[RMDB]
RNA sequence: GGGAACGACUCGAGUAGAGUCGAAAAUCGUCUUAAUUCGUUAAGACGAACUCACGGAUUGUGUCCGUAAUCACAGAAAUAAAAUAAAACAAACAAAAUAAAAUCAUCUCAUGUUCGCAUGAGAUAACGAGUUAUAGUAGUUCGCUACUAUAACUCGAAAAGAAACAACAACAACAAC
Reactivity to DMS in 0.01 (KOAc 150mM, MgCl2 10mM, bicine 150mM(pH8.5), 24C), signal-to-noise 1, nucleotides 027 to 126: u000c000g010u010c000u010u000a000a010u020u010c150g030u000u000a000a000g030a000c000g010a020a110c010u000c020a300c000g000g000a020u000u020g050u000g000u010c000c010g000u040a060a100u030c040a000c050a050g000a060a070a060u000a070a020a080a040u010a100a060a060a050c090a110a040a080c060a100a070a100a120u000a050a060a080a030u030c100a050u000c000u010c000a000u000g010u010u040c140g030c010a000u020g000a020g010a040u000a000a050
Reactivity to 2A3 in 0.01 (KOAc 150mM, MgCl2 10mM, bicine 150mM(pH8.5), 24C), signal-to-noise 4, nucleotides 027 to 126: u010c000g000u010c010u010u010a040a040u080u060c140g060u040u010a000a000g000a000c010g000a040a050c020u000c000a020c020g000g040a100u030u120g030u030g010u040c010c010g080u090a030a080u060c020a010c010a050g180a070a170a020u230a040a100a030a010u230a080a110a020a020c050a050a110a000c020a020a170a090a030u250a110a100a060a070u140c030a030u020c000u000c010a000u000g020u050u050c240g040c080a000u000g020a000g000a000u000a000a000